[RMDB]
RNA sequence: GGGAACGACUCGAGUAGAGUCGAAAACUUAUCCGGUUUUAACGCUGUUUUAUUGGCACAAAGGUUUACGGAUAAACAACUAAUAAUUAAACCUUUUGUGUGCGAAACGUGGUUGUUUAACGUACUCACUGCCCCCAGGGAUUCGUCCCUGGGGGAACAUAAGGCAUUUCUUCGGAAAUGCCUUAUGAAAAGAAACAACAACAACAAC
Reactivity to 2A3 in 0.01 (KOAc 150mM, MgCl2 10mM, bicine 150mM(pH8.5), 24C), signal-to-noise 1, nucleotides 027 to 156: c010u000u010a000u000c000c000g030g040u030u010u010u090a130a050c030g000c040u040g100u060u150u030u070a170u120u290g130g000c010a010c000a000a030a000g000g000u010u010u010a000c020g020g000a010u030a030a090a060c030a030a020c090u190a030a090u120a280a010u280u120a010a000a000c010c000u000u000u140u080g020u000g000u020g120c050g030a030a020a020c020g020u080g030g000u020u020g010u000u000u060a050a020c050g010u040a060c050u030c100a020c030u050g020c010c000c000c010c020a000g000g010g000a050u060u050c120g060u030c030c000c000u010g020g000g010g000g000a000a000
The record gives the reactivity of an RNA of 207 nucleotides to 2A3. 2A3 adducts were read by reverse transcription with SuperScript II with manganese. The RNA was probed in 150 mM KOAc, 10 mM MgCl2 and 150 mM bicine (pH 8.5) at 24 C.